The data come from the RNA Mapping Database (RMDB), library OK2TST. Chemical mapping of a 177-nucleotide RNA with DMS. For DMS the reverse transcriptase was MarathonRT.

RNA sequence: GGGAACGACUCGAGUAGAGUCGAAAAUUUCUGUCGGCAAGUAUAUAAAAAGUCGAUAUACGAACUGUAUGAUGGUGGAUAUAACGCCUCAAGCUCUGCCAUAAUUGAUUUUGUCAACUUAGGACUCGCUUAACAUGAGAUUCGUCUCAUGUUAAGCAAAAGAAACAACAACAACAAC
Reactivity to DMS in 0.01 (KOAc 150mM, MgCl2 10mM, bicine 150mM(pH8.5), 24C), signal-to-noise 4, nucleotides 027 to 126: u010u000u000c030u000g020u010c030g010g010c050a030a200g010u010a060u010a090u010a070a080a080a110a070g000u000c060g000a050u000a020u000a070c050g000a090a080c060u000g000u000a050u000g000a050u000g020g020u000g030g010a080u010a080u000a110a090c140g020c030c010u000c120a070a230g010c080u000c010u000g000c040c010a050u000a090a080u010u000g010a060u000u000u000u000g000u000c130a040a040c140u000u000a130g000g010a060c090u000c160